[RMDB]
RNA sequence: GGGAACGACUCGAGUAGAGUCGAAAAGAUAUGGAAGUGCGCUAUAAUCCAUCGUAACAUCAUAUCGGAAACGAUAUGUGGAUGGGUAGCGUUUCCUAAGUCAAAGCAUGGUCUUCGGACCAUGCAACUGGCUACUCCUGUUCGCAGGAGUAGCCAGAAAAGAAACAACAACAACAAC
Reactivity to 2A3 in 0.01 (KOAc 150mM, MgCl2 10mM, bicine 150mM(pH8.5), 24C), signal-to-noise 1, nucleotides 027 to 126: g040a050u160a030u100g040g040a080a000g140u160g300c040g020c010u010a030u100a230a260u070c010c000a010u000c010g140u160a100a050c030a200u240c000a020u030a000u000c030g020g000a060a000a060c010g000a010u030a010u070g000u020g010g010a010u000g000g050g000u000a000g020c000g010u020u000u000c000c000u020a140a010g110u010c050a120a000a000g000c000a000u010g000g000u000c050u050u090c300g100g000a010c000c000a000u020g030c000a000a000
Reactivity to DMS in 0.01 (KOAc 150mM, MgCl2 10mM, bicine 150mM(pH8.5), 24C), signal-to-noise 1, nucleotides 027 to 126: g010a070u010a300u000g000g000a010a040g010u000g000c000g040c000u000a070u010a300a150u000c000c000a020u010c010g000u000a080a160c120a100u020c010a030u000a000u000c000g020g000a130a060a210c000g020a010u010a000u000g000u010g000g000a010u000g000g010g020u000a020g000c000g010u000u020u000c000c000u000a060a070g040u000c020a120a110a070g040c020a000u000g010g020u000c010u000u000c260g080g000a010c000c000a000u010g020c000a020a040